RNA sequence: GGGAACGACUCGAGUAGAGUCGAAAACACUAUGGAUCACCUUCUAGUCAAUGGGGUAGGGGUCAAUACAUCCGUGAGUCAGACGGAACAGUUAGACUUGAGGGCUUAAUCAAAGGGGAAAACACUGGUGUCAUAGCCAAUCUUCCAAAAGAGUGCCCGUAUCAGCAUAAUUCGUUAUGCUGAUACGAAAAGAAACAACAACAACAAC
Reactivity to DMS in 0.01 (KOAc 150mM, MgCl2 10mM, bicine 150mM(pH8.5), 24C), signal-to-noise 2, nucleotides 027 to 156: c060a100c020u010a080u000g000g040a080u010c060a140c030c000u000u010c030u000a110g020u010c080a060a060u030g020g010g040g050u010a120g010g020g010g050u000c010a050a150u000a090c030a090u010c020c030g030u010g010a110g030u000c110a110g010a050c000g010g000a060a090c050a130g030u000u000a110g000a060c030u010u010g010a110g020g000g010c060u000u010a040a120u030c070a020a040a100g020g020g010g000a040a050a080a060c070a100c080u020g010g020u000g010u000c130a090u000a140g000c000c060a030a080u000c080u010u000c000c030a000a020a050a090g000a110g010u000g000c000c160
Reactivity to 2A3 in 0.01 (KOAc 150mM, MgCl2 10mM, bicine 150mM(pH8.5), 24C), signal-to-noise 5, nucleotides 027 to 156: c070a000c050u090a060u140g080g010a060u090c020a050c040c020u060u050c050u060a030g060u050c050a100a130u100g000g000g020g050u020a060g010g030g000g020u040c020a030a040u120a080c030a040u000c020c010g030u060g020a060g110u120c050a020g020a060c020g010g020a070a050c000a050g040u080u100a030g020a030c030u040u060g040a090g020g020g000c020u060u160a030a030u070c080a060a060a020g050g020g010g000a050a050a000a030c110a030c070u050g000g030u020g010u050c040a070u050a040g010c000c000a020a050u030c040u070u020c010c040a040a070a030a020g050a030g010u040g030c030c030